[RMDB]
RNA sequence: GGGAACGACUCGAGUAGAGUCGAAAAGAUAUGGAGCGAUGUGACAUGAUGACUCGGAAACGAGAGAACAUCAACAGCACAGCGCUCCUAAGUCAAAGAGGGUAUGCGGUUCGCCGCAUACCCUCAACUUACAAAGGGAGUUCGCUCCCUUUGUAAGAAAAGAAACAACAACAACAAC
Reactivity to DMS in 0.01 (KOAc 150mM, MgCl2 10mM, bicine 150mM(pH8.5), 24C), signal-to-noise 4, nucleotides 027 to 126: g010a050u000a300u010g000g000a010g020c000g010a040u000g020u000g010a070c080a230u010g010a010u000g000a160c000u010c000g000g000a080a060a140c010g000a010g000a080g000a130a160c010a000u000c000a050a090c230a130g000c010a010c000a010g010c010g020c000u000c000c000u000a000a060g010u000c020a070a090a110g000a010g000g000g000u000a020u000g000c000g010g010u000u010c240g010c010c000g000c010a000u000a000c000c000c000u000c000a000a010
About this RNA: An RNA of 177 nucleotides, treated with DMS and read out base by base. The reactions ran in a buffer of 150 mM KOAc, 10 mM MgCl2 and 150 mM bicine (pH 8.5), at 24 C. The DMS profile rests on 6,327 reads. Values cover nucleotides 27 to 126. Source: RMDB library TTRDEL, as collected in RNAgym.